[RMDB]
An RNA of 177 nucleotides, treated with DMS and 2A3 and read out base by base.
2A3 adducts were read by reverse transcription with SuperScript II with manganese.
Values are in units of 0.01, from 0 to 300, in steps of 10.
RNA sequence: GGGAACGACUCGAGUAGAGUCGAAAAUAUUGAAUAAGUCCCUGUAGCUUGUACACACCGCCCGUCACUAUCUCAGAUGUUUUUCAGGAUGAAGAGUCCAGGCUCUGAAUAAUGAAAAGUAGAUAAGCCCUAUAAUGUUGUUCGCAACAUUAUAGGGAAAAGAAACAACAACAACAAC
Reactivity to DMS in 0.01 (KOAc 150mM, MgCl2 10mM, bicine 150mM(pH8.5), 24C), signal-to-noise 3, nucleotides 027 to 126: u010a160u000u020g010a040a110u010a090a210g010u000c020c010c020u010g000u000a080g010c040u000u000g000u000a030c050a060c110a070c070c070g000c030c000c010g010u000c020a050c070u000a040u000c060u000c030a070g020a110u010g010u010u000u000u000u000c030a060g010g020a040u010g000a180a030g010a080g010u010c010c140a120g000g010c000u000c010u000g000a140a030u000a020a030u010g000a030a030a040a050g020u000a060g000a110u010a090a130g000
Reactivity to 2A3 in 0.01 (KOAc 150mM, MgCl2 10mM, bicine 150mM(pH8.5), 24C), signal-to-noise 1, nucleotides 027 to 126: u030a000u030u110g010a020a060u060a150a040g030u010c010c020c000u000g090u050a040g010c030u050u090g110u050a010c030a000c000a000c030c030g000c000c000c020g030u040c010a040c060u080a050u070c030u000c040a030g020a100u080g070u030u100u010u000u060c010a030g000g030a000u050g010a030a040g030a040g010u050c030c040a060g090g030c000u000c010u020g050a050a000u030a040a000u030g020a010a050a050a040g030u050a010g000a100u080a100a080g020